[RMDB]
RNA sequence: GGGAACGACUCGAGUAGAGUCGAAAACCAGGUGCGUGCGACGACCUGGGACGCUGGAAACCCGGAGCUGCGCGCUGGGCGGAAAGGACUCCUAGUGGGCCCGGCUGAGAAGGCGGAGGUGGCGCGCGCCGCAGUAAACGUUCGCGUUUACUGCGGCAAAAGAAACAACAACAACAAC
Reactivity to 2A3 in 0.01 (KOAc 150mM, MgCl2 10mM, bicine 150mM(pH8.5), 24C), signal-to-noise 1, nucleotides 027 to 126: c000c000a010g080g040u170g110c050g000u000g070c100g040a080c020g020a030c150c010u030g030g060g000a030c080g020c060u070g000g000a160a050a000c010c030c000g000g100a150g050c050u060g080c080g000c010g000c110u040g040g020g020c040g020g100a170a140a050g110g020a080c020u010c040c000u000a000g010u120g030g060g000c040c010c020g010g000c040u040g060a100g020a150a030g020g000c070g020g080a020g060g000u060g030g010c000g020c020g000c010
Reactivity to DMS in 0.01 (KOAc 150mM, MgCl2 10mM, bicine 150mM(pH8.5), 24C), signal-to-noise 2, nucleotides 027 to 126: c000c000a100g020g020u020g010c030g000u010g020c010g000a110c080g000a120c070c000u030g000g010g000a040c120g000c020u000g060g020a120a150a070c200c010c000g000g100a100g010c080u000g070c090g030c050g000c020u000g000g000g010c090g000g020a130a170a090g000g020a150c060u000c000c030u010a080g040u000g010g000g010c070c030c000g000g030c020u000g000a150g020a190a100g000g010c020g000g000a060g020g020u000g010g010c060g020c040g000c090